[RMDB]
RNA sequence: GGGAACGACUCGAGUAGAGUCGAAAAAGAAAGGAUACCGAAAGGUAUCCAAUUUGCACAUUGGAUUGCGGUAACCUCUCACGUGUGACGUUGAAGUAACUAUGUGCAGUAAUAGCGCAAGAAAAAAGUAAAGAUAAGCCUUCGGGCUUAUCUUUACAAAAGAAACAACAACAACAAC
Reactivity to DMS in 0.01 (KOAc 150mM, MgCl2 10mM, bicine 150mM(pH8.5), 24C), signal-to-noise 1, nucleotides 027 to 126: a110g020a150a040a120g000g000a000u000a010c000c000g010a090a120a130g020g010u010a010u010c000c000a030a020u000u010u000g000c010a000c040a080u000u000g020g000a170u000u000g010c000g000g010u010a050a040c030c010u000c030u000c010a040c070g020u000g030u000g050a040c110g020u000u000g000a060a090g000u010a010a030c010u000a000u010g050u000g010c010a050g040u000a040a090u010a130g010c070g010c030a040a040g000a020a050a090a030a080a070